Record summary
Structure probing data (2A3 and DMS) for a 177-nucleotide construct.
RNA sequence: GGGAACGACUCGAGUAGAGUCGAAAAAACAGCUGCACGUACGUACGAGCAGUUUUCGAAAUAAACGUACGUACGAAAUAAAUAAAUUCUACUCGAUGCGAAACAAUGCAAAGUCGUUCCCAGGGAAGAUUAGCAUUGUGUUCGCACAAUGCUAAUCAAAAGAAACAACAACAACAAC
Reactivity to 2A3 in 0.01 (KOAc 150mM, MgCl2 10mM, bicine 150mM(pH8.5), 24C), signal-to-noise 5, nucleotides 027 to 126: a000a000c120a040g090c040u150g030c060a010c070g000u000a010c010g000u010a000c010g030a040g040c060a060g040u010u020u050u100c080g100a110a020a000u130a030a080a010c000g000u000a000c010g000u020a000c010g010a000a040a000u130a010a040a000u100a020a050a000u040u000c000u000a000c000u000c000g040a030u080g000c020g050a100a080a080c110a120a070u190g010c020a060a070a020g010u000c000g000u000u000c000c000c000a000g010g010g000a050a090
Reactivity to DMS in 0.01 (KOAc 150mM, MgCl2 10mM, bicine 150mM(pH8.5), 24C), signal-to-noise 2, nucleotides 027 to 126: a050a070c100a080g010c070u000g010c110a250c000g010u000a000c010g030u000a020c020g020a170g030c230a160g000u000u000u000u000c170g030a050a070a090u000a040a230a120c020g000u000a000c000g000u000a010c000g000a030a010a060u010a020a040a080u000a100a030a050u020u000c000u000a010c000u010c000g000a130u010g000c000g020a090a060a070c190a110a050u000g000c010a060a200a030g010u000c000g000u000u000c000c000c000a020g000g000g000a150a090
Source: RMDB library M2PK90, as collected in RNAgym. The reactions ran in a buffer of 150 mM KOAc, 10 mM MgCl2 and 150 mM bicine (pH 8.5), at 24 C. The DMS profile rests on 2,108 reads.